RNA sequence: GGGAACGACUCGAGUAGAGUCGAAAAUGGGAUGCUCUUCCCGAUUCCGUCCAUCCCCCACCCCCGAGGGUCGCCCAGGAAUGGCGGGACCCCACUCUAUCGGGGUCCGCGUACCAUCCUUUCUUACACGAGAUAGUAACUUCGGUUACUAUCUCGUAAAAGAAACAACAACAACAAC
Reactivity to DMS in 0.01 (KOAc 150mM, MgCl2 10mM, bicine 150mM(pH8.5), 24C), signal-to-noise 2, nucleotides 027 to 126: u010g020g010g010a010u000g010c100u000c110u000u010c010c000c010g010a120u000u000c050c040g000u010c050c050a120u020c030c000c000c050c030a220c030c010c010c010c020g040a130g010g000g030u000c020g020c000c000c030a060g000g000a090a050u000g020g010c010g020g000g000a010c010c000c000c010a070c200u000c230u000a120u020c120g000g010g000g020u010c000c000g010c040g040u000a080c000c010a020u000c020c010u010u010u000c050u010u000a140c300